[RMDB]
This 207-nucleotide RNA was probed chemically with 2A3. 2A3 adducts were read by reverse transcription with SuperScript II with manganese. Reactivities are given for positions 27 through 156. The reactions ran in a buffer of 150 mM KOAc, 10 mM MgCl2 and 150 mM bicine (pH 8.5), at 24 C.

RNA sequence: GGGAACGACUCGAGUAGAGUCGAAAACGCUGGGACUACAAAGCUCCCGUCCGGGAGCUGAAGCGCGCACGGCUUUGAUCGGACGAGCGAGCAAAAAGGUCCUGUGCUGAAGCGCGCACGGCAACCGAAAGGUGCGAAAAGGGAGUUCGCUCCCUAAGUGAGAACAUGGUUUCGACCAUGUUCUCACAAAAGAAACAACAACAACAAC
Reactivity to 2A3 in 0.01 (KOAc 150mM, MgCl2 10mM, bicine 150mM(pH8.5), 24C), signal-to-noise 1, nucleotides 027 to 156: c010g000c040u100g010g020g010a000c000u090a070c200a080a250a040g000c000u000c040c000c010g000u000c010c010g040g030g070a000g000c000u040g000a130a080g000c010g000c000g000c000a000c040g010g000c000u300u210u030g060a050u130c000g000g000a000c010g030a090g050c130g070a010g030c120a000a030a090a120a100g050g010u000c000c010u060g060u070g000c000u030g030a130a030g010c010g000c000g000c000a010c000g060g000c010a040a060c000c000g070a080a040a000g070g000u050g020c030g050a090a070a080a060g030g010g020a050g020u060u140c190g080c060u000c000c000c000u010a160a030